An RNA of 177 nucleotides, treated with 2A3 and DMS and read out base by base. For 2A3 the reverse transcriptase was SuperScript II with manganese. DMS adducts were read by reverse transcription with MarathonRT. Source: RMDB library OK2TRN, as collected in RNAgym. The 2A3 profile rests on 1,465 reads. 2A3 is a SHAPE reagent: it acylates the 2'-hydroxyl of flexible nucleotides of all four kinds. The RNA was probed in 150 mM KOAc, 10 mM MgCl2 and 150 mM bicine (pH 8.5) at 24 C.
RNA sequence: GGGAACGACUCGAGUAGAGUCGAAAAUCGUGGUAUAGCCCUAACGCUAUUUAAUCUUGCUGACACACUUCUCGGUGGGUUGCCGACAGAAUUGAUUUCGUCGGCUGGAGGACAACUGUUUUACUCCCUAUUGUUAGGCGUUCGCGCCUAACAAUAGAAAAGAAACAACAACAACAAC
Reactivity to 2A3 in 0.01 (KOAc 150mM, MgCl2 10mM, bicine 150mM(pH8.5), 24C), signal-to-noise 1, nucleotides 027 to 126: u060c030g010u020g040g060u100a030u100a080g000c030c030c030u030a100a010c070g000c040u030a040u100u150u090a080a060u040c050u070u090g000c000u030g040a000c000a010c000a020c070u060u000c010u030c010g040g000u040g050g130g000u080u180g030c000c000g010a020c030a110g110a020a020u140u130g110a100u040u180u080c030g000u000c010g040g000c020u010g000g010a040g020g000a030c040a110a070c130u040g050u020u030u030u020a020c020u050c020c000
Reactivity to DMS in 0.01 (KOAc 150mM, MgCl2 10mM, bicine 150mM(pH8.5), 24C), signal-to-noise 3, nucleotides 027 to 126: u010c150g020u000g010g010u000a060u010a080g010c020c040c080u010a100a110c200g000c020u000a020u010u000u000a100a110u000c060u000u000g020c040u010g030a090c070a080c030a080c070u000u000c050u000c030g010g010u010g010g030g010u000u010g020c000c010g010a040c090a080g010a010a040u000u010g010a180u010u000u000c050g000u010c010g010g000c000u000g010g000a040g020g010a090c130a060a060c080u000g010u000u000u010u000a160c150u000c060c040